[RMDB]
RNA sequence: GGGAACGACUCGAGUAGAGUCGAAAAGAAUUGGUAUGUAAGCUACGCCUUCCGGUAGCUGCGUCACACUUUAAGAGUGUGCAUACUGAGCCGAAGCUCAGCUUCGGUCCCCCAAGGGAAGUCCAAAGCGAUCCUCGGUAUUCGUACCGAGGAUCGCAAAAGAAACAACAACAACAAC
Reactivity to 2A3 in 0.01 (KOAc 150mM, MgCl2 10mM, bicine 150mM(pH8.5), 24C), signal-to-noise 1, nucleotides 027 to 126: g100a010a210u000u000g010g000u010a010u000g000u000a000a000g000c000u010a000c010g020c000c000u000u000c000c010g010g000u000a010g000c000u000g000c000g000u010c000a000c000a000c000u040u110u300a210a120g220a000g250u000g000u000g000c000a000u000a010c000u000g020a000g000c000c000g000a000a000g000c010u060c300a110g000c010u010u000c000g010g000u030c000c000c000c000c000a000a010g050g000g000a020a050g020u000c010c080a130a030a030

Structure probing data (2A3) for a 177-nucleotide construct. The RNA was probed in 150 mM KOAc, 10 mM MgCl2 and 150 mM bicine (pH 8.5) at 24 C. The data come from the RNA Mapping Database (RMDB), library OK1LIB.